[RMDB]
RNA sequence: GGGAACGACUCGAGUAGAGUCGAAAAGAGUGCGGUUACGACCGCACUCAAGAAAGAAGAAAACGCGCGACGACGAGCGCGAAAUAAAUAAAUCGUCGUAAAAGACCUCGGAUACGUCCGAGGUCAAGUUUUAAUUUAGUUUCGACUAAAUUAAAACAAAAGAAACAACAACAACAAC
Reactivity to 2A3 in 0.01 (KOAc 150mM, MgCl2 10mM, bicine 150mM(pH8.5), 24C), signal-to-noise 9, nucleotides 027 to 126: g000a000g000u010g000c010g030g020u050u050a100c290g050a010c050c000g000c000a000c000u000c000a000a000g000a000a040a000g140a050a010g110a030a110a020a020c010g000c010g000c000g010a020c000g000a000c010g000a010g010c010g010c010g030a020a030a010u110a000a020a020u150a020a060a030u010c000g000u000c000g000u000a010a000a000a030g000a000c000c000u000c000g010g000a010u020a050c220g100u010c000c000g000a000g000g000u000c000a000a000
Reactivity to DMS in 0.01 (KOAc 150mM, MgCl2 10mM, bicine 150mM(pH8.5), 24C), signal-to-noise 4, nucleotides 027 to 126: g010a020g020u000g020c000g040g010u000u000a110c180g020a060c010c000g000c000a010c000u010c000a050a030g000a120a130a120g010a140a120g020a130a060a100a180c010g000c000g020c000g000a010c000g000a000c000g020a000g010c000g000c000g020a020a060a060u040a070a080a060u030a020a040a010u000c020g000u000c000g010u010a070a080a110a080g000a000c000c000u000c000g010g000a020u000a100c110g010u000c000c000g000a000g000g010u000c000a000a000